[RMDB]
RNA sequence: GGGAACGACUCGAGUAGAGUCGAAAACAUGAUUUACUCAACAAAUUAAUCUAGUUUGUGCUUCAGGCAUGCACCAUUGUGAGUAUUUUUUAGUUUCAAGGUGACAGGUUAUGAAGGUAUGGUGCAAUAUAGAGCAUACAUUCGUGUAUGCUCUAUAAAAAGAAACAACAACAACAAC
Reactivity to 2A3 in 0.01 (KOAc 150mM, MgCl2 10mM, bicine 150mM(pH8.5), 24C), signal-to-noise 3, nucleotides 027 to 126: c030a030u110g010a040u120u110u190a090c050u050c040a050a040c040a060a130a050u140u140a060a090u100c050u050a060g070u060u030u070g040u020g010c020u020u060c050a040g000g090c010a020u050g000c000a010c000c000a100u040u030g030u030g050a020g060u030a060u000u090u020u010u050u100a060g010u020u040u070c050a090a020g080g020u020g090a110c010a020g000g080u120u040a170u220g020a040a010g030g010u080a060u090g060g040u080g000c000a010a000
Reactivity to DMS in 0.01 (KOAc 150mM, MgCl2 10mM, bicine 150mM(pH8.5), 24C), signal-to-noise 7, nucleotides 027 to 126: c050a140u010g010a060u000u000u000a050c050u000c080a110a090c080a050a050a070u000u000a060a090u010c120u000a100g010u000u000u000g010u000g000c020u000u010c080a070g020g000c040a040u000g000c020a020c000c020a060u000u000g010u000g000a040g010u000a000u000u000u010u010u010u000a070g010u000u000u000c040a050a060g000g010u000g000a100c030a020g000g010u000u000a080u000g000a060a050g010g000u000a050u000g010g010u000g010c050a070a120